[RMDB]
RNA sequence: GGGAACGACUCGAGUAGAGUCGAAAACGAUCGUGAGGAUGUCGUCCUUAACGUCGAACCGAUCGCCGAACAGAGCGACGCAUGUUUCGUGCGCCCGUCCUGCGAAGCGUGCCGGUAGGGUCGCCAUCAGGUAAUGGAUCUUCGGAUCCAUUACCUGAAAAGAAACAACAACAACAAC
Reactivity to DMS in 0.01 (KOAc 150mM, MgCl2 10mM, bicine 150mM(pH8.5), 24C), signal-to-noise 1, nucleotides 027 to 126: c110g000a080u040c040g060u000g020a050g000g000a010u000g000u030c210g000u030c000c020u000u000a070a020c090g000u010c040g010a080a060c000c020g000a120u010c030g020c000c050g080a180a050c050a020g000a120g010c000g000a250c020g030c060a050u000g000u020u070u000c140g000u000g080c040g000c160c000c100g000u000c020c020u000g000c040g000a210a040g000c090g000u020g000c010c040g000g030u000a140g000g010g000u030c000g000c020c040a110u000
Reactivity to 2A3 in 0.01 (KOAc 150mM, MgCl2 10mM, bicine 150mM(pH8.5), 24C), signal-to-noise 5, nucleotides 027 to 126: c040g000a020u180c050g040u010g060a030g040g000a030u100g120u300c120g050u040c020c000u010u050a120a040c020g020u030c030g020a050a000c000c000g050a110u050c020g000c020c000g040a090a060c040a030g030a020g070c010g040a050c010g010c040a040u070g070u090u270u280c130g020u040g000c000g020c040c090c010g040u070c010c000u010g030c000g020a070a040g030c050g040u110g030c060c010g050g000u100a140g040g010g020u100c040g010c030c010a030u030
This 177-nucleotide RNA was probed chemically with DMS and 2A3.
The RNA was probed in 150 mM KOAc, 10 mM MgCl2 and 150 mM bicine (pH 8.5) at 24 C.
For 2A3, 2,798 sequencing reads were counted.
For 2A3 the reverse transcriptase was SuperScript II with manganese.
The DMS profile rests on 1,480 reads.
As a SHAPE reagent, 2A3 marks flexible, mostly unpaired nucleotides at the ribose 2'-OH.